An RNA of 177 nucleotides, treated with DMS and 2A3 and read out base by base.
Values are in units of 0.01, from 0 to 300, in steps of 10.
Conditions: 150 mM KOAc, 10 mM MgCl2 and 150 mM bicine (pH 8.5), 24 C.
DMS adducts were read by reverse transcription with MarathonRT.
In probing experiments dimethyl sulfate is read out at A N1 and C N3, which are open when not base-paired.

[RMDB]
RNA sequence: GGGAACGACUCGAGUAGAGUCGAAAACUCUGGUGAGGCCCUAUCUAGUAUAGCAAUCCACCAAGCAGGUGAUUUCACACAAUUCAGGUUCUCAUAGAAAAUGCGCCCUGACUUGACAGGUAUGGUCCCUCCAUGAUGACUUCGGUCAUCAUGGAGGAAAAGAAACAACAACAACAAC
Reactivity to DMS in 0.01 (KOAc 150mM, MgCl2 10mM, bicine 150mM(pH8.5), 24C), signal-to-noise 1, nucleotides 027 to 126: c070u000c000u170g000g000u000g000a100g070g000c280c270c000u000a030u020c000u000a030g040u000a030u080a060g000c140a080a240u070c000c030a000c060c060a280a000g060c280a060g000g070u000g000a000u000u000u000c000a020c300a270c000a000a060u010u000c060a000g130g000u000u030c000u030c000a000u010a010g030a110a060a170a110u040g000c250g000c300c000c070u000g000a030c150u000u030g000a010c060a050g020g000u000a010u000g030g000u000c120
Reactivity to 2A3 in 0.01 (KOAc 150mM, MgCl2 10mM, bicine 150mM(pH8.5), 24C), signal-to-noise 2, nucleotides 027 to 126: c030u020c000u000g080g000u020g050a100g010g020c050c000c020u000a020u000c000u000a050g120u070a140u060a100g000c000a010a020u040c030c060a030c010c010a010a020g070c050a030g020g010u040g050a090u000u150u090c090a070c040a000c000a060a050u000u000c000a010g000g000u140u000c010u000c030a030u010a150g240a070a090a000a000u090g010c020g040c020c000c000u050g010a070c010u030u030g040a010c050a040g000g020u050a120u050g000g000u000c000
The data come from the RNA Mapping Database (RMDB), library OK1LIB.